This 177-nucleotide RNA was probed chemically with 2A3 and DMS. Values cover nucleotides 27 to 126. The RNA was probed in 150 mM KOAc, 10 mM MgCl2 and 150 mM bicine (pH 8.5) at 24 C. For 2A3 the reverse transcriptase was SuperScript II with manganese. For DMS the reverse transcriptase was MarathonRT.
[RMDB]
RNA sequence: GGGAACGACUCGAGUAGAGUCGAAAAGCAGGAAUGCCAAAUCAACAAUGCGCAUGUUGUCGCCGGAUGUGGAUCCGGGUAUCAAAGCGUUUAUAGCCGUUGUCAGAGCUGCAGAACAUCAGUCAGAGAUUUUAACAAUAUUCGUAUUGUUAAAAUCAAAAGAAACAACAACAACAAC
Reactivity to 2A3 in 0.01 (KOAc 150mM, MgCl2 10mM, bicine 150mM(pH8.5), 24C), signal-to-noise 9, nucleotides 027 to 126: g040c040a020g030g100a180a060u080g030c020c030a040a020a070u140c020a010a060c010a050a090u120g010c020g010c020a030u120g040u090u050g080u090c060g050c110c010g010g010a040u080g120u210g300g060a010u000c000c000g010g000g010u030a040u090c040a050a080a020g010c010g010u030u070u080a160u080a040g050c050c040g020u010u020g030u020c030a010g010a040g080c010u020g000c010a020g070a090a030c030a090u120c030a020g130u050c030a010g030a010
Reactivity to DMS in 0.01 (KOAc 150mM, MgCl2 10mM, bicine 150mM(pH8.5), 24C), signal-to-noise 9, nucleotides 027 to 126: g010c030a040g010g020a110a100u010g010c020c050a040a070a090u020c090a070a080c130a080a060u020g000c040g010c040a090u000g010u000u000g010u000c170g010c010c010g010g000a020u010g000u040g010g010a050u000c010c020g000g010g010u000a050u010c060a040a070a080g010c040g010u000u010u010a070u020a130g010c070c070g000u000u000g000u000c050a060g010a130g010c030u010g000c040a070g000a080a080c120a060u010c080a060g010u010c070a060g010a270